[RMDB]
RNA sequence: GGGAACGACUCGAGUAGAGUCGAAAAACCCAGUAAUGCCCGGGGGGAGGCGGGGUAAACCCAUACCAUGGGAACUGCUGGGUCCCUCGGAUGUCGAUCCCCUCUCCCGUUCGGGAAAAGGGGGACUGUACCUAAGACUUCGGUCUUAGGAAAAGAAACAACAACAACAAC
Reactivity to DMS in 0.01 (KOAc 150mM, MgCl2 10mM, bicine 150mM(pH8.5), 24C), signal-to-noise 9, nucleotides 027 to 129: a110c020c000c000a100g030u070a080a040u070g000c080c020c000g090g000g030g000g000g020a100g010g000c030g010g000g010g010u040a050a110a110c040c020c000a100u040a110c180c150a140u000g020g000g000a060a040c040u000g010c020u010g020g010g030u070c020c020c000u010c030g010g010a060u010g020u020c070g000a150u040c010c020c010c030u000c120u000c000c010c000g050u060u070c090g030g000g010a010a010a030a040g000g000g000g000g000a040c020u020g010u020a130
Reactivity to 2A3 in 0.01 (KOAc 150mM, MgCl2 10mM, bicine 150mM(pH8.5), 24C), signal-to-noise 9, nucleotides 027 to 129: a000c000c000c010a010g050u100a060a100u140g040c000c000c000g020g000g000g010g010g000a030g020g010c050g000g010g000g000u050a070a070a060c020c000c000a020u100a150c050c050a050u100g000g000g010a030a020c010u040g010c020u060g060g060g070u070c010c000c000u010c010g000g010a050u070g020u030c040g040a150u060c020c010c010c010u010c010u030c000c000c000g110u230u190c110g000g010g000a010a020a010a040g020g000g010g000g010a020c020u030g020u050a050